[RMDB]
RNA sequence: GGGAACGACUCGAGUAGAGUCGAAAAUCUUUGCGCUUCGGCGCAAAGAAAACGCCUGCUGCUCCGUGACCCGUCCGUGAGACCGUCCGUCCAGCCCGCCGAAAACUAUGGUGUUCGCACCAUAGAAUCUACUACUAUGCUUCGGCAUAGUAGUAGAAAAAGAAACAACAACAACAAC
Reactivity to 2A3 in 0.01 (KOAc 150mM, MgCl2 10mM, bicine 150mM(pH8.5), 24C), signal-to-noise 2, nucleotides 027 to 126: u000c000u000u000u010g000c030g020c030u060u090c300g120g030c000g000c010a000a000a010g000a020a050a000a010c040g020c000c030u100g070c030u020g030c000u000c030c010g050u030g100a090c000c010c000g030u010c000c040g050u050g040a040g010a080c020c040g040u030c020c030g040u000c010c020a020g020c030c010c040g040c030c030g120a080a050a010a030c010u030a000u020g000g000u010g020u010u050c230g010c090a000c000c000a000u000a000g020a010a040
Reactivity to DMS in 0.01 (KOAc 150mM, MgCl2 10mM, bicine 150mM(pH8.5), 24C), signal-to-noise 3, nucleotides 027 to 126: u010c010u000u000u010g010c000g010c010u010u010c230g020g020c010g000c000a000a000a010g000a020a040a090a120c220g020c030c010u000g020c040u000g020c020u000c040c030g010u000g010a110c050c020c020g000u010c050c030g020u010g010a100g000a100c060c020g000u000c030c050g010u010c020c050a080g000c030c020c020g010c070c080g000a030a060a090a160c010u000a010u000g000g020u000g010u000u010c170g010c010a020c000c000a000u000a000g020a110a120